[RMDB]
RNA sequence: GGGAACGACUCGAGUAGAGUCGAAAAAGAGGCAUGGUCGUUUACCGCGACUUUCCAGUGAAUGGAUCAACCUGUUGAUGCAGGUAGUGUGUAUCAUGCGAAUCGUUCUGCGAUUCGUAACUGCAGGCUCCCCUUAGAACUUCGGUUCUAAGGGGAGAAAAGAAACAACAACAACAAC
Reactivity to 2A3 in 0.01 (KOAc 150mM, MgCl2 10mM, bicine 150mM(pH8.5), 24C), signal-to-noise 1, nucleotides 027 to 126: a020g110a060g100g000c140a090u110g060g000u010c010g000u100u120u070a110c060c010g050c030g000a010c000u000u100u000c040c010a060g010u030g300a270a150u070g100g050a040u060c010a030a080c000c000u040g010u040u100g080a070u170g010c030a010g070g060u140a130g050u050g000u020g020u050a030u080c020a010u010g000c000g000a000a000u010c000g000u150u110c070u280g000c010g000a010u000u000c000g010u010a020a020c030u030g010c000a000g050g000
Reactivity to DMS in 0.01 (KOAc 150mM, MgCl2 10mM, bicine 150mM(pH8.5), 24C), signal-to-noise 1, nucleotides 027 to 126: a030g000a140g010g000c110a050u000g000g000u000c030g010u000u000u010a090c170c090g010c020g000a060c070u000u000u000c050c010a020g000u010g020a130a060u000g000g010a070u010c140a070a110c010c010u010g000u000u000g000a060u020g000c000a030g030g020u010a030g010u000g000u000g020u000a010u000c010a130u000g010c000g000a000a000u000c000g000u000u020c200u030g000c010g000a020u000u000c000g060u010a010a110c220u000g000c050a030g000g000